RNA sequence: GGGAACGACUCGAGUAGAGUCGAAAAGAUAUGGAACUACAAAGAGCGAUAAGCUCUGUCGGAAACGACUGAGCUUUUGACGCUCAAAAAGGUUCCUAAGUCAAAGUCCACUCUUCGGAGUGGACAAGUUUGUAAUUUGGUUCGCCAAAUUACAAACAAAAGAAACAACAACAACAAC
Reactivity to 2A3 in 0.01 (KOAc 150mM, MgCl2 10mM, bicine 150mM(pH8.5), 24C), signal-to-noise 2, nucleotides 027 to 126: g000a010u010a020u100g010g020a010a010c010u100a040c150a100a280a040g010a000g030c020g300a300u080a220a010g000c010u000c010u010g000u000c000g000g000a010a010a030c000g000a010c010u000g010a000g010c010u080u020u040u140g160a060c030g000c010u000c000a000a000a000a070a000g020g000u020u000c000c010u000a070a010g020u020c030a140a030a000g000u000c000c000a000c000u000c040u040u060c300g140g010a010g000u040g000g000a010c000a000a020
Reactivity to DMS in 0.01 (KOAc 150mM, MgCl2 10mM, bicine 150mM(pH8.5), 24C), signal-to-noise 3, nucleotides 027 to 126: g010a000u000a110u010g000g000a010a020c010u000a060c130a110a190a140g000a010g020c000g040a200u010a030a020g000c000u000c000u010g000u000c010g010g000a070a030a070c000g000a010c000u000g000a010g010c000u010u000u010u000g000a180c050g010c000u010c000a020a070a030a140a090g010g000u000u000c000c000u000a020a110g000u000c000a110a090a190g010u000c000c000a010c000u000c000u000u010c180g010g010a010g000u000g000g010a010c000a000a010

Chemical mapping of a 177-nucleotide RNA with 2A3 and DMS. The reactions ran in a buffer of 150 mM KOAc, 10 mM MgCl2 and 150 mM bicine (pH 8.5), at 24 C.